[RMDB]
RNA sequence: GGGAACGACUCGAGUAGAGUCGAAAAUCACUGGACUUCGGUCCAGUGAAAAAGAAAGACGGACGGCGAACGUCAAAGGCUGACGUACGAAAGUACGAAAAAAAAGUACGCCCUUCGGGGCGUACAAUCUAUAAGAACACUUCGGUGUUCUUAUAGAAAAAGAAACAACAACAACAAC
Reactivity to DMS in 0.01 (KOAc 150mM, MgCl2 10mM, bicine 150mM(pH8.5), 24C), signal-to-noise 4, nucleotides 027 to 126: u000c000a010c000u000g000g000a020c000u000u020c180g030g000u000c010c000a000g020u000g000a000a030a060a100a100g010a070a120a110g000a070c040g000g010a060c070g000g010c030g010a090a050c030g000u000c050a050a090a100g010g010c070u010g010a140c030g010u000a010c000g000a130a090a110g010u000a010c020g020a000a010a000a050a030a050a100a140g000u000a000c000g010c000c000c010u000u020c200g020g020g000g010c000g000u010a000c000a050a040
Reactivity to 2A3 in 0.01 (KOAc 150mM, MgCl2 10mM, bicine 150mM(pH8.5), 24C), signal-to-noise 2, nucleotides 027 to 126: u010c000a000c000u000g000g000a000c000u040u070c300g080g000u000c020c000a000g000u010g000a000a000a000a000a010g050a010a040a010g030a010c050g020g010a010c030g040g120c050g040a130a060c000g030u030c030a100a070a030g070g000c080u050g060a070c000g010u000a000c020g040a120a000a020g010u030a000c030g120a100a000a010a000a000a000a000a000g000u000a000c000g000c010c000c000u010u050c170g020g010g020g010c000g000u000a000c000a000a000